[RMDB]
RNA sequence: GGGAACGACUCGAGUAGAGUCGAAAAGAUAUGGACUUGGAGCGAACUACCUCAACUUCGGAAACGAAGUGGGAGGCGCAUCGGUGGGAUACAAGUCCUAAGUCAAAUCGCCCCUUCGGGGGCGAAAUCCAUUAUUUAGGUUCGCCUAAAUAAUGGAAAAAGAAACAACAACAACAAC
Reactivity to 2A3 in 0.01 (KOAc 150mM, MgCl2 10mM, bicine 150mM(pH8.5), 24C), signal-to-noise 8, nucleotides 027 to 126: g030a010u070a040u130g010g000a000c010u010u020g060g050a080g110c040g040a100a120c070u120a160c160c000u030c030a030a030c010u000u000c000g030g010a070a060a050c010g000a020a010g000u020g040g300g000a010g020g000c040g020c060a090u120c070g200g070u220g090g170g010a050u100a240c010a010a000g000u000c000c000u020a100a000g030u020c010a010a040a240u030c010g000c010c010c020c060u020u100c300g080g000g000g030g000c000g000a020a010a010
Reactivity to DMS in 0.01 (KOAc 150mM, MgCl2 10mM, bicine 150mM(pH8.5), 24C), signal-to-noise 5, nucleotides 027 to 126: g010a050u000a300u010g010g010a010c010u000u000g000g010a160g020c020g010a080a090c130u010a150c000c000u000c010a120a010c010u000u000c000g010g000a110a080a180c000g010a010a000g020u000g000g010g010a020g000g010c200g010c160a070u000c070g010g010u000g010g010g010a200u000a140c020a010a010g010u000c000c000u010a030a090g010u000c030a050a140a120u000c010g010c000c000c000c000u000u010c210g020g010g000g010g010c000g000a000a030a080
Source: RMDB library TTRDEL, as collected in RNAgym. Chemical mapping of a 177-nucleotide RNA with 2A3 and DMS. The reactions ran in a buffer of 150 mM KOAc, 10 mM MgCl2 and 150 mM bicine (pH 8.5), at 24 C. For 2A3, 18,937 sequencing reads were counted.